An RNA of 207 nucleotides, treated with 2A3 and DMS and read out base by base. It was measured as part of the RMDB library OK3TST. 2A3 is a SHAPE reagent: it acylates the 2'-hydroxyl of flexible nucleotides of all four kinds.

RNA sequence: GGGAACGACUCGAGUAGAGUCGAAAACAACUUCUAUCUACAAUCUCAUCUACCGACUCGUAGUUGCAAAGGAAGUGGGAAAAUGUGGCUGGGUACCUUGCCACCCGGAAUGAAAGUGGGAUUUCGUUGUGAGGGAACAUUGCGGAGACACCUAGCAAUGACCAACACAUUUCGAUGUGUUGGUCAUAAAAGAAACAACAACAACAAC
Reactivity to 2A3 in 0.01 (KOAc 150mM, MgCl2 10mM, bicine 150mM(pH8.5), 24C), signal-to-noise 2, nucleotides 027 to 156: c010a040a070c020u050u000c010u050a180u070c020u050a000c050a070a120u050c030u040c100a180u030c030u060a060c050c030g220a090c050u060c040g010u020a000g050u010u070g100c030a090a070a000g110g010a100a000g010u140g010g000g120a000a070a090a120u210g000u030g010g000c040u000g020g010g070u140a150c020c070u050u080g020c010c010a000c020c000c010g040g090a060a120u140g130a080a050a060g020u110g000g000g090a070u060u000u000c060g030u030u180g040u040g060a050g000g040g000a020a040c030a060u060u170g010c020g010g000a040g010a010c020a030c020c010u070a020g070c060a070
Reactivity to DMS in 0.01 (KOAc 150mM, MgCl2 10mM, bicine 150mM(pH8.5), 24C), signal-to-noise 1, nucleotides 027 to 156: c050a020a060c070u000u000c020u000a060u000c030u000a090c010a040a070u020c050u000c050a140u020c010u010a120c060c070g010a040c000u000c070g050u010a060g020u020u060g040c000a010a100a300g000g000a050a080g080u000g000g040g010a140a030a020a140u000g110u000g020g030c040u000g000g010g030u010a010c020c050u000u000g000c010c050a050c000c050c010g000g000a080a090u010g050a020a000a080g020u010g010g030g000a060u000u000u000c090g060u000u000g040u000g000a070g010g010g020a070a040c070a030u000u020g000c070g020g000a090g050a040c030a040c060c010u000a100g040c080a150